[RMDB]
RNA sequence: GGGAACGACUCGAGUAGAGUCGAAAAAUUAUAACCUUCACCGCCACCGAACUAAUCCUAUUCUAUAUCCUAUUCGAAGCAACACUAGUACCCACACUAAUUAUCAUCACACGCUGAGGAAACCAAACAGAACGACUCAAUGCAGGACUUUAUUUCCCUAUAGAGAUAACUUCGGUUAUCUCUAUAGAAAAGAAACAACAACAACAAC
Reactivity to 2A3 in 0.01 (KOAc 150mM, MgCl2 10mM, bicine 150mM(pH8.5), 24C), signal-to-noise 4, nucleotides 027 to 156: a030u230u150a090u070a140a060c010c000u030u050c030a040c030c020g020c030c010a030c010c030g040a060a040c010u050a090a040u070c000c020u050a060u070u130c050u050a080u020a050u240c010c000u030a060u060u110c040g060a060a010g000c010a020a050c020a020c100u030a010g040u080a080c010c040c030a030c020a000c040u030a090a070u090u110a050u130c040a020u040c020a030c010a000c120g050c060u040g000a020g040g030a030a090a010c030c060a050a030a020c050a020g060a050a000c010g040a020c020u010c060a030a020u060g010c010a010g000g020a010c000u080u120u130a090u030u080u040c000c010
Reactivity to DMS in 0.01 (KOAc 150mM, MgCl2 10mM, bicine 150mM(pH8.5), 24C), signal-to-noise 2, nucleotides 027 to 156: a110u000u000a060u000a090a150c040c020u000u000c040a040c030c010g020c030c000a030c030c020g020a060a100c040u000a040a060u000c020c040u000a100u000u010c040u020a060u000a110u010c020c030u010a140u000u000c040g010a140a120g020c030a050a060c040a070c050u000a080g000u000a070c030c010c010a040c090a080c070u000a080a080u000u010a070u000c070a080u000c040a060c020a040c090g010c030u010g010a100g010g010a050a050a080c030c020a060a050a090c040a130g010a100a090c020g010a080c030u000c020a030a090u000g030c050a050g000g030a060c060u000u000u000a120u030u000u000c040c010
Structure probing data (2A3 and DMS) for a 207-nucleotide construct. Source: RMDB library PDB130, as collected in RNAgym. 2A3 adducts were read by reverse transcription with SuperScript II with manganese. The RNA was probed in 150 mM KOAc, 10 mM MgCl2 and 150 mM bicine (pH 8.5) at 24 C.